[RMDB]
The data come from the RNA Mapping Database (RMDB), library TTRDEL. Chemical mapping of a 177-nucleotide RNA with DMS and 2A3. For DMS, 4,139 sequencing reads were counted.
RNA sequence: GGGAACGACUCGAGUAGAGUCGAAAAGAUAUGGAUGUCCUGACGACCACAGGCGUUGAAAUCGGAAACGAUGGAGCCUGUGAAGUCGGAUGGACAUCCUAAGUCAAAAGGCGGGUUCGCCCGCCAACUCAGUAGUAAACUUCGGUUUACUACUGAGAAAAGAAACAACAACAACAAC
Reactivity to DMS in 0.01 (KOAc 150mM, MgCl2 10mM, bicine 150mM(pH8.5), 24C), signal-to-noise 3, nucleotides 027 to 126: g010a070u000a300u000g010g010a010u000g010u000c000c000u000g000a300c010g010a030c010c000a020c000a000g000g010c000g030u000u020g010a060a160a030u000c000g000g000a140a090a160c000g000a020u000g000g000a140g000c010c000u000g000u000g000a030a090g010u000c000g000g000a200u000g000g000a010c000a000u000c000c010u000a000a080g010u000c010a090a070a080a110g020g040c000g000g010g000u000u020c240g000c000c000c000g010c000c000a020a020
Reactivity to 2A3 in 0.01 (KOAc 150mM, MgCl2 10mM, bicine 150mM(pH8.5), 24C), signal-to-noise 2, nucleotides 027 to 126: g020a010u070a030u180g010g000a010u000g000u000c020c000u030g100a030c000g000a000c010c010a000c000a000g000g020c040g120u280u050g010a030a040a010u000c000g010g020a090a060a030c020g000a000u010g000g040a010g000c020c050u000g000u000g010a010a010g000u010c000g010g000a010u010g000g000a000c010a000u010c000c000u000a000a000g000u000c010a020a080a080a170g000g000c000g050g000g020u070u110c210g100c060c000c000g000c030c000a000a010